[RMDB]
RNA sequence: GGGAACGACUCGAGUAGAGUCGAAAAUUACUAAUUUUACUGAUCCUUAGAUAUAGCACCUUAGCUUAAGUGAAAUUUCAUUGUAUCUAUUCAUAUUACGAGAAUAGUUUUAAGGAAGUGUAGGUGGCUCGAUGCGUAAUUUCGAUUACGCAUCGAGAAAAGAAACAACAACAACAAC
Reactivity to DMS in 0.01 (KOAc 150mM, MgCl2 10mM, bicine 150mM(pH8.5), 24C), signal-to-noise 1, nucleotides 027 to 126: u000u110a060c120u000a000a040u000u010u010u000a020c150u000g020a140u010c040c030u020u020a070g010a120u000a020u040a040g000c000a010c010c040u010u050a270g080c030u000u020a010a000g000u010g010a000a140a040u050u000u000c040a090u030u080g000u070a000u040c100u050a000u010u010c020a060u020a080u040u000a090c140g040a070g040a050a000u000a000g010u020u020u020u020a060a080g000g090a040a060g000u000g000u000a030g000g040u000g010g030
Reactivity to 2A3 in 0.01 (KOAc 150mM, MgCl2 10mM, bicine 150mM(pH8.5), 24C), signal-to-noise 2, nucleotides 027 to 126: u090u030a030c040u120a000a040u090u020u020u240a010c000u010g170a090u090c000c020u040u080a040g020a060u180a010u060a110g000c000a020c020c000u030u060a050g160c000u000u150a160a020g120u130g200a010a040a150u270u140u120c150a110u090u230g070u120a040u040c000u000a000u000u060c040a110u060a030u300u070a070c050g000a000g000a170a000u000a010g060u030u000u050u110a000a030g160g030a010a110g000u100g090u150a010g000g100u130g090g000
Chemical mapping of a 177-nucleotide RNA with DMS and 2A3. For 2A3 the reverse transcriptase was SuperScript II with manganese. The RNA was probed in 150 mM KOAc, 10 mM MgCl2 and 150 mM bicine (pH 8.5) at 24 C. The DMS profile rests on 1,365 reads. In probing experiments dimethyl sulfate is read out at A N1 and C N3, which are open when not base-paired. Source: RMDB library OK1LIB, as collected in RNAgym. For 2A3, 752 sequencing reads were counted.